[RMDB]
RNA sequence: GGGAACGACUCGAGUAGAGUCGAAAAGCUCAUUGCGUGCGCGCUUCAUAAGUGUACCCCUAGCGAGGCUGAGACGGAGGGCCAUUUGGUACACAUUCACUUACCGUCGUUUUGUACGCGAGACUCCUCGCUCCGUAAUAUUCGUAUUACGGAGCGAAAAAGAAACAACAACAACAAC
Reactivity to DMS in 0.01 (KOAc 150mM, MgCl2 10mM, bicine 150mM(pH8.5), 24C), signal-to-noise 5, nucleotides 027 to 126: g000c060u000c030a190u000u000g010c020g020u000g010c030g030c280g010c120u000u010c100a070u010a060a130g020u000g010u000a030c010c000c180c180u000a090g010c220g010a060g020g010c020u000g010a130g010a030c020g000g010a300g000g000g010c040c020a140u000u000u010g010g010u000a010c020a020c030a080u010u000c160a070c040u010u010a070c020c010g000u010c010g010u000u000u000u010g020u020a040c040g010c010g000a030g020a100c040u020c030c050
Reactivity to 2A3 in 0.01 (KOAc 150mM, MgCl2 10mM, bicine 150mM(pH8.5), 24C), signal-to-noise 6, nucleotides 027 to 126: g010c020u000c020a190u040u160g010c020g000u020g000c030g010c000g040c070u170u100c120a110u060a190a070g010u010g010u030a020c000c000c010c070u070a030g060c040g190a120g020g000c010u010g010a020g000a110c020g010g010a020g010g010g040c010c000a070u130u060u090g020g000u020a010c010a000c000a060u140u160c050a020c030u090u170a080c000c010g010u030c020g000u060u030u080u250g020u030a000c010g000c010g020a010g010a030c040u030c000c010
Structure probing data (DMS and 2A3) for a 177-nucleotide construct. 2A3 adducts were read by reverse transcription with SuperScript II with manganese. The DMS profile rests on 4,585 reads. The data come from the RNA Mapping Database (RMDB), library OK2TST. The reactions ran in a buffer of 150 mM KOAc, 10 mM MgCl2 and 150 mM bicine (pH 8.5), at 24 C.